[RMDB]
RNA sequence: GGGAACGACUCGAGUAGAGUCGAAAAGAUAUGGACGAUGCUAGCUAUAAUCCUCAAGGUGUCGGAAACGACACCUAUGAGGGUAGCUAGGCAUCGUCCUAAGUCAAAAGACGCGUUCGCGCGUCAAGAUUUCAGGAAUGUUCGCAUUCCUGAAAUCAAAAGAAACAACAACAACAAC
Reactivity to 2A3 in 0.01 (KOAc 150mM, MgCl2 10mM, bicine 150mM(pH8.5), 24C), signal-to-noise 4, nucleotides 027 to 126: g040a010u070a030u170g010g010a010c000g000a000u010g000c010u000a000g000c010u030a020u050a300a280u210c000c000u010c010a010a010g010g000u000g000u000c020g030g030a060a080a040c030g000a000c010a010c000c010u010a070u010g000a000g000g010g000u000a010g010c000u010a020g020g070c000a000u000c000g020u010c000c000u010a000a000g000u000c010a000a000a030a110g010a000c010g030c000g020u060u120c300g010c010g020c040g110u000c000a010a010
Reactivity to DMS in 0.01 (KOAc 150mM, MgCl2 10mM, bicine 150mM(pH8.5), 24C), signal-to-noise 5, nucleotides 027 to 126: g000a050u000a300u010g020g010a010c000g020a020u000g010c000u000a000g000c010u000a050u010a300a140u000c010c000u000c000a030a020g000g020u010g000u000c000g000g010a120a120a200c000g010a000c000a000c000c000u000a000u010g010a010g030g010g000u000a000g000c000u000a020g020g020c000a000u000c000g020u010c000c000u010a000a090g000u000c060a130a080a160a190g000a000c000g010c000g020u000u000c250g020c010g000c010g010u000c000a060a110

The record gives the reactivity of an RNA of 177 nucleotides to 2A3 and DMS.
DMS adducts were read by reverse transcription with MarathonRT.
Source: RMDB library TTRDES, as collected in RNAgym.